[RMDB]
RNA sequence: GGGAACGACUCGAGUAGAGUCGAAAAGGACCGUCCAACAGGUCAUCUCUGAGAGGGUGACCCAGCUCACCCGCGAGGAGCUGAGCAGGCUGCAGCCGGUGUUGCAGCCUCUACCGAGCCCAGGUACGCAGGGAACUCUUUGCAUCCUCACUCAGUGUGGAGCAAAACAAUUCGUUGUUUUGCUCCAAAAAGAAACAACAACAACAAC
Reactivity to 2A3 in 0.01 (KOAc 150mM, MgCl2 10mM, bicine 150mM(pH8.5), 24C), signal-to-noise 1, nucleotides 027 to 156: g070g000a020c000c000g080u080c100c080a110a040c060a200g010g030u020c030a120u000c060u000c000u000g040a060g030a080g050g000g000u010g010a030c010c210c030a010g000c020u000c000a000c000c000c000g000c010g000a010g000g010a000g000c060u040g040a000g000c070a040g000g000c000u000g000c010a000g070c030c080g200g110u300g010u050u000g000c000a000g010c030c000u020c010u010a010c020c030g000a000g030c000c000c020a000g090g000u130a130c130g010c090a060g000g050g030a170a210c000u060c020u060u040u080g040c010a260u020c040c000u000c010a000c010u000c060a010g070u290g040
Reactivity to DMS in 0.01 (KOAc 150mM, MgCl2 10mM, bicine 150mM(pH8.5), 24C), signal-to-noise 1, nucleotides 027 to 156: g010g020a090c000c010g050u040c130c180a110a090c040a180g000g010u020c010a080u010c030u000c000u000g010a300g000a090g000g020g090u000g020a030c040c010c200a060g020c010u000c000a060c010c000c040g060c040g030a280g020g010a110g000c030u000g000a080g080c000a060g020g000c010u000g050c000a030g030c020c050g000g040u000g020u020u000g020c010a130g010c030c000u000c020u000a020c000c000g010a090g010c000c020c040a080g000g010u000a050c050g040c040a130g010g000g000a120a180c080u000c030u000u000u000g000c010a000u000c010c040u020c020a300c010u010c010a110g010u020g020
This 207-nucleotide RNA was probed chemically with 2A3 and DMS. The 2A3 profile rests on 817 reads. The DMS profile rests on 1,700 reads. The reactions ran in a buffer of 150 mM KOAc, 10 mM MgCl2 and 150 mM bicine (pH 8.5), at 24 C. It was measured as part of the RMDB library OK3TST.